[RMDB]
RNA sequence: GGGAACGACUCGAGUAGAGUCGAAAACAGUAUGGAUUUGUCACGGUGGCACAUUUUGUGCAAGCGUUUGAACUCUCACACACGCAAGAAAUUGACACGGUACAAAUUUGUUCGUUCAAUGCGGCUGACCCUACUACCAGUUCGCUGGUAGUAGGGUAAAAGAAACAACAACAACAAC
Reactivity to 2A3 in 0.01 (KOAc 150mM, MgCl2 10mM, bicine 150mM(pH8.5), 24C), signal-to-noise 2, nucleotides 027 to 126: c050a000g080u100a120u200g020g050a060u020u040u080g030u040c050a010c020g070g030u030g070g010c010a040c000a070u070u210u180u170g040u020g030c050a130a010g070c020g020u000u020u090g040a040a030c010u000c000u080c130a050c020a020c000a000c000g000c010a000a130g110a070a140a020u020u060g010a000c000a000c120g020g020u060a030c020a070a120a120u130u050u090g040u060u100c060g030u050u170c050a030a060u140g040c030g060g000c050u030g030
Reactivity to DMS in 0.01 (KOAc 150mM, MgCl2 10mM, bicine 150mM(pH8.5), 24C), signal-to-noise 2, nucleotides 027 to 126: c050a050g010u010a060u010g020g000a050u010u000u000g000u000c160a020c000g010g020u000g010g000c020a030c130a070u000u020u000u000g010u000g000c020a090a090g010c030g040u000u000u010g000a050a130c110u000c070u000c070a090c070a020c070a050c060g020c020a050a130g000a030a050a110u000u000g000a060c050a000c020g000g000u010a020c020a040a080a050u000u000u000g030u010u010c070g000u000u010c090a060a110u000g000c080g010g000c060u000g000